An RNA of 177 nucleotides, treated with 2A3 and DMS and read out base by base.
Source: RMDB library M2PK90, as collected in RNAgym.
For 2A3, 1,574 sequencing reads were counted.
For 2A3 the reverse transcriptase was SuperScript II with manganese.

RNA sequence: GGGAACGACUCGAGUAGAGUCGAAAAGAAAAUAAAGCGUACGAAGAUGGACGUACGGAACCAGUGCGUACCAGAAUCGCACAUCCAGCGCUCUAAGGUGAGCGCAAAACCUAAUAAUAGAAAAAAACGUCUUAUUCUAGUUCGCUAGAAUAAGACGAAAAGAAACAACAACAACAAC
Reactivity to 2A3 in 0.01 (KOAc 150mM, MgCl2 10mM, bicine 150mM(pH8.5), 24C), signal-to-noise 2, nucleotides 027 to 126: g000a000a000a000a020u210a000a090a010g100c070g010u010a010c020g050a020a010g070a070u110g030g040a030c010g000u010a000c000g070g040a050a050c090c050a040g010u000g000c020g010u030a300c000c010a010g020a020a030u000c000g020c020a010c010a030u070c070c030a040g000c030g000c000u000c000u030a030a120g240g060u090g050a000g000c000g000c020a000a000a000a020c040c010u070a110a060u220a130a110u120a300g150a060a110a010a010a060a010a020
Reactivity to DMS in 0.01 (KOAc 150mM, MgCl2 10mM, bicine 150mM(pH8.5), 24C), signal-to-noise 1, nucleotides 027 to 126: g000a070a150a070a050u010a060a040a170g000c150g010u010a010c000g000a090a090g000a290u000g000g010a140c010g000u000a010c000g030g010a080a140c190c190a110g030u000g000c000g000u000a110c080c050a130g020a130a200u000c000g000c040a000c000a300u010c060c060a090g070c030g000c010u000c000u010a080a190g010g000u010g010a000g030c000g000c000a010a020a040a010c100c040u030a000a110u050a040a080u080a070g000a020a020a020a050a070a020a090